[RMDB]
RNA sequence: GGGAACGACUCGAGUAGAGUCGAAAAACAUGAGAAACUAUGCACACAGGAGGGCAGCUUCUUCAUGUUGAAGCAAAACUUAUGCAUUGUACAUAGACUACACUUUACAUUUUUCAGGCUACAAAACCCUUAGUGCUAACGGAUCAAUGAGGUCUAAAGUUAUUGCCGAGUUCGCUCGGCAAUAACUAAAAGAAACAACAACAACAAC
Reactivity to 2A3 in 0.01 (KOAc 150mM, MgCl2 10mM, bicine 150mM(pH8.5), 24C), signal-to-noise 1, nucleotides 027 to 156: a000c020a020u030g070a010g130a100a040a030c080u120a020u140g020c000a000c000a020c000a090g300g000a020g010g020g000c050a020g000c030u000u000c000u030u100c030a050u070g120u070u050g050a120a020g010c030a000a000a060a110c020u120u050a040u050g050c030a120u000u110g020u030a010c000a090u050a110g020a060c100u090a010c060a020c000u090u140u110a050c120a110u160u180u000u000u000c150a000g030g000c050u080a090c050a050a020a080a210c000c000c040u000u030a000g000u000g020c000u000a120a000c050g060g020a000u010c050a030a100u160g000a080g020g000u000c010u040a110a160